Structure probing data (DMS and 2A3) for a 177-nucleotide construct. Values cover nucleotides 27 to 126. For 2A3 the reverse transcriptase was SuperScript II with manganese. The reactions ran in a buffer of 150 mM KOAc, 10 mM MgCl2 and 150 mM bicine (pH 8.5), at 24 C. The data come from the RNA Mapping Database (RMDB), library TTRDEL. For DMS, 4,542 sequencing reads were counted.
RNA sequence: GGGAACGACUCGAGUAGAGUCGAAAAGAUAUGGAGGAAUCUACCCACCGACCCUCCGAGUACUCGGAAACGAGUACGAGGAGCGAGGAUUCCUCCUAAGUCAAACUACCAAGUUCGCUUGGUAGAACUUUUAUAUAACCUUCGGGUUAUAUAAAAGAAAAGAAACAACAACAACAAC
Reactivity to DMS in 0.01 (KOAc 150mM, MgCl2 10mM, bicine 150mM(pH8.5), 24C), signal-to-noise 5, nucleotides 027 to 126: g000a060u020a070u010g000g000a020g010g010a020a010u000c020u000a190c090c050c090a300c150c130g000a140c200c120c000u000c000c020g000a300g000u000a000c000u000c000g010g000a050a060a100c000g010a000g010u000a010c010g000a300g000g000a010g010c090g010a200g000g000a030u000u000c010c000u000c000c010u000a000a080g000u000c040a090a100a150c000u000a010c010c000a000a000g000u000u010c210g020c000u000u000g000g000u000a010g000a060a090
Reactivity to 2A3 in 0.01 (KOAc 150mM, MgCl2 10mM, bicine 150mM(pH8.5), 24C), signal-to-noise 2, nucleotides 027 to 126: g010a050u080a070u180g000g000a010g020g000a010a010u000c010u050a210c010c030c100a060c100c140g070a100c020c010c000u000c000c000g000a020g020u010a010c000u000c000g000g000a040a040a010c000g010a010g000u010a010c000g000a030g000g000a010g020c100g020a050g000g000a000u000u000c000c000u010c000c000u010a050a000g040u030c070a080a060a130c000u010a000c000c000a010a000g020u050u150c300g040c150u000u010g000g000u010a000g000a000a010